[RMDB]
RNA sequence: GGGAACGACUCGAGUAGAGUCGAAAAACGGGCAAUUGUUUACAGUCCUUGGGUUUCAUGACGGGUCUCUGGCCGUCGCUUGUUGGGCUCAUGGCUCUCCUGGCUACAUGCUUUGCAUGAAAUCACGCAUAGUAUCCCGAUUCGUCGGGAUACUAUGAAAAGAAACAACAACAACAAC
Reactivity to DMS in 0.01 (KOAc 150mM, MgCl2 10mM, bicine 150mM(pH8.5), 24C), signal-to-noise 4, nucleotides 027 to 126: a080c060g000g010g020c060a070a110u000u010g020u010u010u030a120c110a100g000u000c020c020u000u010g000g020g010u020u010u010c080a100u020g000a070c070g000g000g010u020c040u020c090u000g000g010c030c050g010u000c060g000c100u010u000g010u010u010g000g010g010c010u000c070a070u010g000g000c040u010c020u000c000c010u010g010g000c030u000a110c040a010u000g000c010u030u040u040g010c030a020u000g010a080a080a050u000c070a080c150g010
Reactivity to 2A3 in 0.01 (KOAc 150mM, MgCl2 10mM, bicine 150mM(pH8.5), 24C), signal-to-noise 9, nucleotides 027 to 126: a000c030g000g020g010c050a080a110u120u060g070u060u130u100a080c050a070g060u070c030c000u050u070g080g000g000u030u040u050c050a050u100g070a060c030g050g030g050u040c040u030c040u120g100g000c010c010g040u050c020g000c030u030u100g030u030u080g030g010g000c010u030c090a080u100g050g000c010u010c010u020c020c020u020g040g000c000u040a030c020a040u050g020c010u070u130u290g020c010a020u020g060a040a020a020u120c070a050c110g050
Structure probing data (DMS and 2A3) for a 177-nucleotide construct. Conditions: 150 mM KOAc, 10 mM MgCl2 and 150 mM bicine (pH 8.5), 24 C. For 2A3, 10,188 sequencing reads were counted. The data come from the RNA Mapping Database (RMDB), library OK1LIB. For DMS, 10,583 sequencing reads were counted.